[RMDB]
RNA sequence: GGGAACGACUCGAGUAGAGUCGAAAAAGAUGAACAACACACACGCUGCUGUAUCUCCCUGUGGCAGGUGGGCAAGGAGGGGUAUUGGCGUCUGGGACCACGAGAGGCUGGGGCUGGGGAGCAGGCACUGUCCGAAAAUAUUCGUAUUUUCGGACAGAAAAGAAACAACAACAACAAC
Reactivity to 2A3 in 0.01 (KOAc 150mM, MgCl2 10mM, bicine 150mM(pH8.5), 24C), signal-to-noise 3, nucleotides 027 to 126: a000g090a080u160g030a070a040c040a020a030c030a020c000a010c010a000c120g060c040u030g010c000u020g010u160a110u010c070u040c010c010c000u050g030u080g050g020c040a030g000g060u080g020g040g000c080a090a010g030g040a080g010g010g000g000u060a130u060u170g050g030c030g010u030c050u020g010g000g090a070c010c050a080c120g090a080g010a000g120g040c110u080g020g010g000g000c050u070g010g020g000g010a040g010c020a010g050g000c010a020
Reactivity to DMS in 0.01 (KOAc 150mM, MgCl2 10mM, bicine 150mM(pH8.5), 24C), signal-to-noise 3, nucleotides 027 to 126: a110g000a060u010g000a110a070c090a050a070c070a060c130a110c070a070c130g010c080u000g010c040u010g010u000a080u010c090u000c030c020c010u000g010u000g000g010c090a050g000g000u010g010g000g010c140a090a080g020g000a130g000g000g010g000u000a060u000u010g010g010c070g000u000c070u000g000g010g000a110c040c050a070c110g000a110g000a120g000g000c090u000g020g010g000g010c080u000g000g000g010g000a080g010c030a040g000g010c090a140